[RMDB]
RNA sequence: GGGAACGACUCGAGUAGAGUCGAAAAGAAAGGCAGCCAAUGCAGCCCACGAAGCCAUUCGACGCAUGCUUUUGCAUGCCGCCCACGACUGAGGGCAGCUGCGGCACUGAGGGCAGCUGCCGAAAGACGCUAUAGUACGAUUCGUCGUACUAUAGCGAAAAGAAACAACAACAACAAC
Reactivity to DMS in 0.01 (KOAc 150mM, MgCl2 10mM, bicine 150mM(pH8.5), 24C), signal-to-noise 6, nucleotides 027 to 126: g000a070a120a140g010g010c020a040g010c030c080a080a110u010g000c090a060g010c030c010c040a120c100g010a140a080g010c040c040a110u000u000c050g010a090c110g000c010a020u000g010c010u000u000u000u000g020c000a020u000g010c030c070g010c010c010c120a130c130g010a090c090u010g010a170g000g000g010c040a040g010c010u000g000c060g010g000c050a120c150u010g000a090g020g000g020c030a090g010c010u000g010c000c000g010a020a060a090g000a170
Reactivity to 2A3 in 0.01 (KOAc 150mM, MgCl2 10mM, bicine 150mM(pH8.5), 24C), signal-to-noise 7, nucleotides 027 to 126: g080a040a060a000g020g000c010a010g000c040c060a070a020u200g030c020a040g030c010c010c000a040c050g060a050a020g020c030c010a100u070u080c060g040a030c050g010c020a030u020g020c010u120u240u200u300g010c020a030u020g010c010c010g010c000c000c000a080c050g220a070c110u150g080a130g010g060g000c010a000g010c020u040g010c020g050g030c060a040c160u140g040a180g000g040g000c000a010g010c000u000g000c000c000g010a010a010a000g080a010

Source: RMDB library OK2TRN, as collected in RNAgym. Structure probing data (DMS and 2A3) for a 177-nucleotide construct. The RNA was probed in 150 mM KOAc, 10 mM MgCl2 and 150 mM bicine (pH 8.5) at 24 C.